Chemical mapping of a 207-nucleotide RNA with 2A3 and DMS. It was measured as part of the RMDB library OK3TST. For DMS the reverse transcriptase was MarathonRT. For DMS, 15,078 sequencing reads were counted.
[RMDB]
RNA sequence: GGGAACGACUCGAGUAGAGUCGAAAAGUGCUAGCUCUCGUGUUCAACUUAUCGAAUCUCUUGGGAUUCACGUAUGUGCCUCUCACGAUCCCUAUAUGAUUUGCUCACUUCUUUCAGAUAUGCCGAUCGCGACGCCCAGCAACGAUGGGCCAACCGAUAUCUUUGUUGUAUUCGUACAACAAAGAUAAAAAGAAACAACAACAACAAC
Reactivity to 2A3 in 0.01 (KOAc 150mM, MgCl2 10mM, bicine 150mM(pH8.5), 24C), signal-to-noise 9, nucleotides 027 to 156: g060u060g020c030u030a030g010c010u000c010u020c050g040u030g060u100u080c070a120a080c100u140u140a130u230c080g050a060a050u000c040u030c020u140u180g080g010g000a030u070u050c030a030c080g110u130a080u230g060u040g020c010c020u050c020u020c010a020c050g040a070u050c010c010c020u040a060u020a020u170g090a080u030u040u100g020c030u020c040a060c040u080u080c010u030u180u070c040a040g030a110u090a040u220g040c030c030g050a030u030c020g000c030g050a040c060g010c000c010c010a010g030c040a090a110c080g070a070u040g010g000g000c000c010a030a020c020c010g030a020
Reactivity to DMS in 0.01 (KOAc 150mM, MgCl2 10mM, bicine 150mM(pH8.5), 24C), signal-to-noise 5, nucleotides 027 to 156: g020u000g010c040u000a100g020c050u000c030u010c040g030u010g020u010u020c040a060a120c060u000u020a080u000c070g010a060a030u000c010u010c070u000u000g020g010g000a080u010u000c010a090c070g010u000a050u000g020u000g000c010c010u000c030u000c050a100c080g010a100u000c010c010c020u010a120u000a100u000g000a130u000u000u000g000c020u020c060a060c080u000u000c030u000u010u000c030a110g010a130u000a070u000g010c030c020g010a100u000c030g030c040g020a190c100g000c020c030c010a080g020c050a090a100c220g010a130u000g000g020g010c010c040a040a100c040c010g020a300